Chemical mapping of a 207-nucleotide RNA with DMS and 2A3. Source: RMDB library OK3TST, as collected in RNAgym. The DMS profile rests on 1,814 reads.

[RMDB]
RNA sequence: GGGAACGACUCGAGUAGAGUCGAAAAAGAUGUGUCUAUAGCCCAUUCCAGUUAAGCAUUUUUUCAAUCAGUUAAGUUUAUUAGUUCUUGCAAGGCAUUGAUCUUUGGAAUAGAGAUGCUGAAGCAGCUUAUUCAAAAGAAAGGGAACGACAAAGAAAUAUUACCAGUGGUUCGCCACUGGUAAUAUAAAAGAAACAACAACAACAAC
Reactivity to DMS in 0.01 (KOAc 150mM, MgCl2 10mM, bicine 150mM(pH8.5), 24C), signal-to-noise 1, nucleotides 027 to 156: a060g000a040u000g020u010g000u020c040u010a160u000a160g020c030c010c050a150u000u000c060c020a140g010u020u010a080a140g000c000a000u000u000u000u030u000u000c040a090a150u020c070a190g000u000u000a060a110g010u000u020u000a000u030u000a060g050u010u000c010u000u000g010c020a100a180g000g040c040a070u000u010g000a130u010c000u010u000u010g020g030a050a050u000a090g030a050g030a010u000g030c040u000g030a130a190g020c030a060g030c000u010u000a050u000u010c030a030a030a050a050g000a010a060a210g020g000g040a010a050c080g020a050c030a100a070a090g010a080a120
Reactivity to 2A3 in 0.01 (KOAc 150mM, MgCl2 10mM, bicine 150mM(pH8.5), 24C), signal-to-noise 1, nucleotides 027 to 156: a030g140a050u040g110u000g000u070c010u010a120u110a140g000c000c000c000a000u050u000c040c010a090g030u050u000a060a040g000c090a140u090u090u000u000u130u180c050a120a150u030c000a010g010u080u050a080a000g000u060u090u200a160u080u090a050g040u060u060c040u050u100g010c000a000a030g010g000c000a000u000u010g120a190u030c090u060u110u180g040g000a080a050u090a140g010a000g000a000u000g000c050u010g050a280a050g000c010a000g040c000u000u120a080u170u100c070a100a110a110a000g090a020a050a020g110g000g000a050a000c090g050a050c080a000a070a000g150a010a120